[RMDB]
RNA sequence: GGGAACGACUCGAGUAGAGUCGAAAAGGACAAAUGGAUCGCAAAGUGUCUCUUGUUUCUUUGAGAUCAAUCGCCUGUUCAGCUUUCAAUUUUACAACAGAUUCAACAUUCUUAGCCAUAAUUUCAGCCUUGUCCUUAUCGCUAGGAACGCUUAACGCCGGUAGCAACAUUUCGAUGUUGCUACCGGAAAAGAAACAACAACAACAAC
Reactivity to 2A3 in 0.01 (KOAc 150mM, MgCl2 10mM, bicine 150mM(pH8.5), 24C), signal-to-noise 1, nucleotides 027 to 156: g080g020a010c030a080a110a100u120g040g030a040u210c120g040c130a050a070a090g050u030g050u010c040u010c000u060u060g080u080u040u010c000u050u010u050g060a070g000a050u150c000a030a070u090c060g000c010c020u030g100u000u040c000a070g000c020u020u150u060c090a120a130u040u080u010u180a070c060a100a000c010a170g110a150u110u200c020a030a050c010a130u000u000c020u030u040a000g040c000c030a040u050a180a180u120u170u200c060a080g050c010c000u050u100g030u010c010c000u020u050a030u140c000g000c000u000a020g010g060a060a030c090g050c050u080u000a090a000c060g000